[RMDB]
RNA sequence: GGGAACGACUCGAGUAGAGUCGAAAACACCUGUGAUGCUGAGAUGUUCUUCAAGGACCUCUCGUAUGAUAUGAACCUCUACAAGAACGUCCUCUGCUUGGCUGGUUCAGUAUUGGUGCCCAGCGGGCCGUACUGACGCUUUCGAGCGUCAGUACGGAAAAGAAACAACAACAACAAC
Reactivity to 2A3 in 0.01 (KOAc 150mM, MgCl2 10mM, bicine 150mM(pH8.5), 24C), signal-to-noise 2, nucleotides 027 to 126: c040a030c000c000u010g010u100g090a020u050g010c200u160g000a020g000a050u000g000u070u050c030u160u150c140a170a200g040g000a010c010c000u000c000u000c000g030u050a030u090g110a020u010a060u150g010a010a030c000c020u040c100u080a060c040a020a040g000a110a020c040g080u050c010c010u110c080u020g050c020u010u030g100g000c030u030g000g030u070u080c030a020g020u070a140u130u150g060g000u050g030c010c010c000a020g040c000g020g020g030
Reactivity to DMS in 0.01 (KOAc 150mM, MgCl2 10mM, bicine 150mM(pH8.5), 24C), signal-to-noise 3, nucleotides 027 to 126: c090a090c060c010u010g000u000g000a030u000g010c030u030g010a010g010a020u000g000u000u000c020u000u010c300a130a130g010g010a010c000c040u000c000u000c020g010u000a010u000g000a070u000a100u000g010a040a090c040c010u000c040u000a110c040a040a080g010a060a100c110g000u000c020c020u000c070u000g000c030u000u000g010g010c080u000g010g010u000u000c020a030g020u000a070u000u000g010g000u000g010c220c000c020a100g000c110g010g000g010